Chemical mapping of a 177-nucleotide RNA with 2A3 and DMS. The reactions ran in a buffer of 150 mM KOAc, 10 mM MgCl2 and 150 mM bicine (pH 8.5), at 24 C. For DMS, 1,876 sequencing reads were counted. 2A3 adducts were read by reverse transcription with SuperScript II with manganese. For DMS the reverse transcriptase was MarathonRT.

[RMDB]
RNA sequence: GGGAACGACUCGAGUAGAGUCGAAAAGAUAUGGAGACCGAACUACGAAUUAGCCUUCUAGAGCGAAGAACAAGCUCGGAAACGAGCUUGGGAGCUCGACAAGGCUAAUUCGCGGUCUCCUAAGUCACCUCAUUAGUAUCUUCGGAUACUAAUGAGGAAAAGAAACAACAACAACAAC
Reactivity to 2A3 in 0.01 (KOAc 150mM, MgCl2 10mM, bicine 150mM(pH8.5), 24C), signal-to-noise 2, nucleotides 027 to 126: g030a050u100a080u200g010g000a010g000a010c030c010g050a220a210c250u200a110c300g010a000a000u000u000a020g010c000c000u020u040c050u060a020g000a010g050c030g300a300a010g030a090a010c000a000a020g040c000u030c050g000g020a050a100a030c000g000a000g000c000u000u040g010g000g020a000g020c000u000c000g030a030c010a010a010g000g110c000u030a000a010u000u000c000g000c000g020g030u010c000u000c000c010u000a010a000g030u000c040a060
Reactivity to DMS in 0.01 (KOAc 150mM, MgCl2 10mM, bicine 150mM(pH8.5), 24C), signal-to-noise 3, nucleotides 027 to 126: g010a040u000a300u000g000g010a000g010a010c000c000g030a140a120c160u030a300c010g000a020a000u000u000a020g000c000c000u000u000c030u000a300g010a020g030c020g020a090a110g000a170a270c000a010a040g000c010u010c000g000g020a030a160a230c020g020a000g000c010u000u030g000g000g000a110g010c000u000c000g020a090c300a000a010g000g000c000u000a010a000u000u000c000g010c020g000g020u000c010u000c000c000u000a020a040g000u000c030a190